[RMDB]
RNA sequence: GGGAACGACUCGAGUAGAGUCGAAAAAAAGCAUCUAAGCGCGAAACUCACCACAAGAUGAGAAUUCCCUUGAAGGUCGUUGUAGACUACAACGUUGAUAGGAUGCAGAUGUACAGGUAGUAAUACCCACUAAAAUGGUGUUCGCACCAUUUUAGUGAAAAGAAACAACAACAACAAC
Reactivity to 2A3 in 0.01 (KOAc 150mM, MgCl2 10mM, bicine 150mM(pH8.5), 24C), signal-to-noise 3, nucleotides 027 to 126: a000a000a000g010c010a000u020c010u060a140a000g060c030g000c010g050a040a020a020c030u030c010a010c020c000a060c050a120a060g060a130u050g010a000g030a090a140u050u060c040c000c000u000u040g030a030a010g050g050u100c020g000u020u010g040u030a100g080a300c070u040a010c060a010a000c000g050u040u040g040a050u040a030g010g020a040u120g000c000a010g000a040u050g020u080a050c070a060g020g030u030a000g000u000a050a050u010a040c000c000
Reactivity to DMS in 0.01 (KOAc 150mM, MgCl2 10mM, bicine 150mM(pH8.5), 24C), signal-to-noise 5, nucleotides 027 to 126: a050a050a110g010c010a010u000c010u000a100a110g020c070g030c130g000a050a040a150c030u000c010a020c020c030a120c280a120a100g000a050u010g000a030g000a100a120u000u000c030c000c010u000u000g010a180a090g010g000u000c020g010u000u010g010u000a080g020a120c150u000a050c020a010a010c040g000u010u000g010a120u000a060g010g000a070u010g000c030a080g010a050u000g010u000a090c160a070g010g010u000a020g020u010a090a110u000a020c010c010